RNA sequence: GGGAACGACUCGAGUAGAGUCGAAAACAGGUAAGUACACAAUUCUCUAAGCGAUGAGAAGCGUGUGGAAAAUUAGGGAGGGGCUACGGCUAUAAUCCUAAGAAAGCUUAUCUACAAGCGGAGGUAUAAAAGCUCGCAGCGUUCGCGCUGCGAGCAAGCGUAAGUUAUUCUUCGGAAUAACUUACGCAAAAGAAACAACAACAACAAC
Reactivity to 2A3 in 0.01 (KOAc 150mM, MgCl2 10mM, bicine 150mM(pH8.5), 24C), signal-to-noise 1, nucleotides 027 to 156: c020a010g000g010u030a030a000g090u120a040c010a000c100a210a160u010u040c030u000c030u090a150a300g060c110g190a080u120g030a010g010a000a020g010c010g000u040g000u050g040g020a060a040a060a000u070u070a020g040g000g070a070g000g100g000g000c010u030a020c040g000g010c000u000a050u060a220a100u100c010c020u030a040a030g040a100a040a000g030c010u030u050a010u070c010u040a030c050a060a010g000c040g150g040a100g040g070u070a120u050a190a150a050a020g000c010u050c070g100c010a050g000c040g010u040u030c030g010c000g000c110u010g040c060g000a000g000c030a000a000
An RNA of 207 nucleotides, treated with 2A3 and read out base by base. Conditions: 150 mM KOAc, 10 mM MgCl2 and 150 mM bicine (pH 8.5), 24 C. As a SHAPE reagent, 2A3 marks flexible, mostly unpaired nucleotides at the ribose 2'-OH. It was measured as part of the RMDB library M2RFPK.